[RMDB]
RNA sequence: GGGAACGACUCGAGUAGAGUCGAAAAAGCUCACAUGGCAAGAUUGAAACUUCCAGUGGAUGAUUAUGUUACUGAUACUAGCACGGUUUUAGAUCAGGUUAUUCGUAUUAUACAGUCUUAUAUUGAACACCUACUCCUACUUCGGUAGGAGUAGGUGAAAAGAAACAACAACAACAAC
Reactivity to 2A3 in 0.01 (KOAc 150mM, MgCl2 10mM, bicine 150mM(pH8.5), 24C), signal-to-noise 1, nucleotides 027 to 126: a010g140c040u050c010a050c020a170u040g000g020c070a000a000g000a080u150u190g140a160a080a150c080u060u050c050c000a050g030u070g070g000a100u010g020a030u080u050a040u290g080u040u080a090c010u000g010a020u000a150c010u010a030g000c080a050c130g040g080u000u130u000u110a010g000a020u050c030a000g000g070u040u020a080u060u070c010g010u010a020u070u030a070u070a050c000a010g050u000c080u130u190a190u050a040u130u190g050a100a000
Reactivity to DMS in 0.01 (KOAc 150mM, MgCl2 10mM, bicine 150mM(pH8.5), 24C), signal-to-noise 2, nucleotides 027 to 126: a060g020c050u000c030a110c090a090u000g000g030c200a050a030g040a100u000u020g010a160a150a150c030u000u020c040c020a060g010u010g010g010a080u010g000a060u000u010a030u000g020u010u000a070c030u000g000a060u000a050c050u000a000g030c140a180c150g010g020u010u020u010u000a030g000a050u000c030a000g010g000u000u020a060u000u020c070g010u000a030u010u010a120u000a110c130a080g000u010c040u000u010a090u000a190u000u020g010a130a170